[RMDB]
RNA sequence: GGGAACGACUCGAGUAGAGUCGAAAAGUGAUUACCGUAGUGGGUCAUAAACCCGUAAAUGGCAAAGAAGGCGACGGCCGAAAUAGCCAUGCUAUUUCGCAUCUCUUUGCCUUUGGUCGCGCCGAUAUAUUACCACUCAGUUCGCUGAGUGGUAAUAAAAAGAAACAACAACAACAAC
Reactivity to 2A3 in 0.01 (KOAc 150mM, MgCl2 10mM, bicine 150mM(pH8.5), 24C), signal-to-noise 2, nucleotides 027 to 126: g010u010g020a050u090u150a260c030c020g000u040a080g120u180g030g000g040u000c010a040u070a110a130a130c020c000c000g000u000a040a120a110u150g000g000c010a020a020a030g050a090a090g090g010c100g030a080c070g060g000c050c010g010a000a030a000u030a010g000c030c100a110u250g000c000u020a010u010u010u000c020g000c020a090u020c020u020c000u020u010u000g070c000c000u030u040u010g000g000u060c040g000c010g000c080c000g050a000u050a030
Reactivity to DMS in 0.01 (KOAc 150mM, MgCl2 10mM, bicine 150mM(pH8.5), 24C), signal-to-noise 4, nucleotides 027 to 126: g010u000g000a030u000u000a170c010c020g010u010a150g020u020g020g010g000u000c030a020u000a070a130a120c010c010c010g020u020a050a080a090u010g010g000c010a020a020a030g000a080a110g020g010c090g030a120c180g010g010c180c020g000a000a010a010u000a010g000c010c260a200u010g000c000u000a000u000u000u000c000g020c090a090u010c080u000c010u000u000u000g000c010c000u010u000u000g010g000u000c090g020c130g030c060c020g000a120u010a100
This 177-nucleotide RNA was probed chemically with 2A3 and DMS. For 2A3, 1,846 sequencing reads were counted. DMS adducts were read by reverse transcription with MarathonRT. 2A3 adducts were read by reverse transcription with SuperScript II with manganese. The reactions ran in a buffer of 150 mM KOAc, 10 mM MgCl2 and 150 mM bicine (pH 8.5), at 24 C.